[RMDB]
RNA sequence: GGGAACGACUCGAGUAGAGUCGAAAAUAUUUGCGCAGGGUUCUACGGCACGAGUGAAUCGCAGACGUUCAGCGAGGCCAGCAGCAGCGGGCGCGACUACCUGGCAGAGGUUUGCCGCGACUGGGAGACGGAUCACAGAAUUCGUUCUGUGAUCCGUAAAAGAAACAACAACAACAAC
Reactivity to DMS in 0.01 (KOAc 150mM, MgCl2 10mM, bicine 150mM(pH8.5), 24C), signal-to-noise 1, nucleotides 027 to 126: u000a100u000u010u000g010c060g030c040a020g020g010g000u020u000c020u000a090c060g000g030c020a060c080g000a050g030u000g000a100a070u000c090g030c070a060g080a110c120g000u010u000c080a090g020c030g020a130g000g000c020c020a050g000c090a050g050c070a090g020c050g010g000g030c020g000c040g000a050c040u010a030c020c000u000g000g000c120a070g010a110g000g000u010u000u020g020c040c030g010c010g000a030c020u020g000g020g050a170g020